The data come from the RNA Mapping Database (RMDB), library OK2TST. An RNA of 177 nucleotides, treated with 2A3 and DMS and read out base by base.
[RMDB]
RNA sequence: GGGAACGACUCGAGUAGAGUCGAAAAGUGGGUAAGUGAGAAAGACGAGCACGUAGACCUUCAUCGGCCUCAAGAUAAAGCGAUGCAAGGCGAAUUAAUCUCAGCAUUGCGCAAUUAUACUUUAGAAGCAUAAUUUACCUUUCGAGGUAAAUUAUGCAAAAGAAACAACAACAACAAC
Reactivity to 2A3 in 0.01 (KOAc 150mM, MgCl2 10mM, bicine 150mM(pH8.5), 24C), signal-to-noise 4, nucleotides 027 to 126: g050u050g010g010g000u070a070a000g040u020g050a060g040a090a110a010g070a040c050g030a020g030c030a000c060g010u020a040g050a110c000c000u030u020c020a040u040c030g140g040c020c000u090c040a060a020g030a100u190a100a090a010g040c030g000a000u020g040c030a010a050g060g030c030g030a020a010u150u080a070a060u050c030u000c020a020g030c020a050u020u060g000c030g000c010a000a020u150u080a100u060a180c040u140u130u110a060g040a230a000
Reactivity to DMS in 0.01 (KOAc 150mM, MgCl2 10mM, bicine 150mM(pH8.5), 24C), signal-to-noise 3, nucleotides 027 to 126: g030u010g000g010g010u000a050a090g010u000g000a050g020a070a090a090g000a110c110g020a150g000c060a060c090g010u000a130g000a190c050c020u000u010c040a040u000c090g000g000c040c050u010c120a080a090g000a120u010a020a050a130g000c040g000a070u000g000c120a060a030g020g030c070g000a060a140u020u010a060a130u010c030u010c050a110g010c020a070u000u000g010c030g030c100a070a080u010u000a050u000a060c070u000u000u000a090g010a160a110
The reactions ran in a buffer of 150 mM KOAc, 10 mM MgCl2 and 150 mM bicine (pH 8.5), at 24 C. 2A3 adducts were read by reverse transcription with SuperScript II with manganese.